This 207-nucleotide RNA was probed chemically with 2A3 and DMS. The DMS profile rests on 4,185 reads. The reactions ran in a buffer of 150 mM KOAc, 10 mM MgCl2 and 150 mM bicine (pH 8.5), at 24 C. Values cover nucleotides 27 to 156. It was measured as part of the RMDB library M2RFOK.
RNA sequence: GGGAACGACUCGAGUAGAGUCGAAAACGCAAAGCUGCAGCGUGGCGCUCUGGAGGCCUUGCCCCGCGCACUGCUCUUUACAUGGCCCGACGUGAGGGCACUUCGCGGGCAGUGCUGCGGCCUCGUGAAACUGCCCCUAAGUUCGCUUAGGGGCAAACAUUCCUUGUAGGUUCGCCUACAAGGAAUGAAAAGAAACAACAACAACAAC
Reactivity to 2A3 in 0.01 (KOAc 150mM, MgCl2 10mM, bicine 150mM(pH8.5), 24C), signal-to-noise 3, nucleotides 027 to 156: c020g000c040a090a030a030g010c020u080g010c040a020g010c040g060u100g040g010c030g040c060u080c110u090g140g060a040g040g000c010c030u050u130g020c020c010c010c030g000c000g000c010a010c020u010g000c000u000c000u060u140u130a070c060a100u150g110g000c000c010c000g080a120c100g130u140g050a120g000g000g020c040a080c040u040u050c060g030c050g050g000g010c000a030g020u040g020c030u040g000c000g000g000c010c000u020c000g030u010g010a090a070a010c040u030g000c000c000c000c000u000a000a000g010u010u110c130g050c140u000u000a000g000g000g010g010c000a000a000a000
Reactivity to DMS in 0.01 (KOAc 150mM, MgCl2 10mM, bicine 150mM(pH8.5), 24C), signal-to-noise 2, nucleotides 027 to 156: c040g020c050a030a030a090g000c030u000g000c020a010g010c050g050u020g020g040c020g000c070u020c060u020g020g010a200g020g000c020c090u030u010g000c040c020c020c020g030c080g000c020a120c020u000g000c000u000c020u010u000u010a140c030a090u000g010g000c010c060c030g030a300c090g000u000g020a180g020g020g040c000a010c010u000u000c000g030c200g000g010g010c020a130g020u000g010c020u000g030c010g030g010c010c020u000c070g000u000g010a090a050a120c070u000g010c000c000c000c000u000a000a060g020u000u010c300g030c030u000u000a020g030g020g020g080c030a000a010a030